Chemical mapping of a 177-nucleotide RNA with 2A3 and DMS.
The reactions ran in a buffer of 150 mM KOAc, 10 mM MgCl2 and 150 mM bicine (pH 8.5), at 24 C.
For 2A3 the reverse transcriptase was SuperScript II with manganese.

RNA sequence: GGGAACGACUCGAGUAGAGUCGAAAAGGAGAUUGUUUACAGUAUUCUUGUCUGAAAGGAUGAGAGCUGUAAUUUAAGAGCGCAAUCUUCACUUCGCCCCUUUUCUGCAUAAUCCUUGUUUAGCCAAGCUAACGAUAGGGUUCGCCCUAUCGUUAGCAAAAGAAACAACAACAACAAC
Reactivity to 2A3 in 0.01 (KOAc 150mM, MgCl2 10mM, bicine 150mM(pH8.5), 24C), signal-to-noise 4, nucleotides 027 to 126: g040g000a020g000a030u010u010g030u070u020u000a000c010a000g020u010a230u090u010c000u000u010g020u010c000u050g120a060a040a050g060g000a000u020g010a000g000a000g000c000u000g000u000a010a010u060u130u070a110a060g050a020g050c060g000c020a000a010u000c000u030u020c020a050c080u120u100c030g050c000c000c020c000u030u080u090u070c040u060g030c030a060u070a140a060u120c000c000u040u040g010u080u080u080a050g010c070c030a060a020
Reactivity to DMS in 0.01 (KOAc 150mM, MgCl2 10mM, bicine 150mM(pH8.5), 24C), signal-to-noise 2, nucleotides 027 to 126: g020g000a030g010a010u000u000g010u000u000u000a000c010a000g030u010a090u020u000c000u000u000g010u000c000u000g000a110a100a120g010g000a000u010g000a000g010a020g000c000u010g000u000a000a010u030u010u010a100a130g010a140g030c280g000c020a010a000u000c000u000u000c060a070c070u000u010c160g010c010c030c020c110u010u000u000u040c080u000g050c060a050u000a130a040u000c020c040u000u030g010u000u000u020a130g000c090c140a010a190